[RMDB]
RNA sequence: GGGAACGACUCGAGUAGAGUCGAAAAGUCAUCGCAGUCAAUUUGGUGACAUGCAUCGUCUAGUUAAACAACAUUUCAAAAAUGCCCAAUACUUUGGAUUCACUGGUACGCCACGUUUUCCAGAAAAAGGCCUUUCACCAUUCGUGGUGAAAGGCCUAAAAGAAACAACAACAACAAC
Reactivity to 2A3 in 0.01 (KOAc 150mM, MgCl2 10mM, bicine 150mM(pH8.5), 24C), signal-to-noise 1, nucleotides 027 to 126: g000u000c000a030u010c050g030c000a000g170u050c050a110a140u100u040u220g030g000u000g000a070c000a010u170g000c000a000u000c050g100u000c000u030a000g060u100u250a290a060a000c000a110a000c010a010u130u080u130c050a050a030a010a030a030u000g000c000c000c120a040a050u060a050c010u010u110u000g050g030a100u000u070c110a080c000u000g000g000u080a040c130g070c000c000a110c110g020u080u080u080u160c020c070a020g000a000a190a000a000